[RMDB]
This 177-nucleotide RNA was probed chemically with DMS. Values cover nucleotides 27 to 126. The reactions ran in a buffer of 150 mM KOAc, 10 mM MgCl2 and 150 mM bicine (pH 8.5), at 24 C.
RNA sequence: GGGAACGACUCGAGUAGAGUCGAAAAGAUAUGGAGAAUCCUCCUGAUCCGAAGAACUAAAUUGAUACGUACCUCGGAAACGAGGUACGUAUCAAUUUAGGGAGGAUCGGAGGAGUUCUCCUAAGUCCAUUAAGAGCAAGUUCGCUUGCUCUUAAUGAAAAGAAACAACAACAACAAC
Reactivity to DMS in 0.01 (KOAc 150mM, MgCl2 10mM, bicine 150mM(pH8.5), 24C), signal-to-noise 6, nucleotides 027 to 126: g000a110u010a300u000g010g000a010g010a040a110u000c000c000u000c000c000u020g030a010u000c000c000g000a120a190g010a150a230c000u000a000a000a010u000u000g000a010u000a000c000g010u000a010c000c000u000c000g010g010a100a090a230c010g010a010g000g010u000a000c000g000u000a000u000c000a000a000u000u000u000a010g010g000g000a070g000g000a000u000c000g010g000a010g000g000a000g000u000u000c000u000c000c000u000a020a090g010u010c040
For DMS, 17,083 sequencing reads were counted.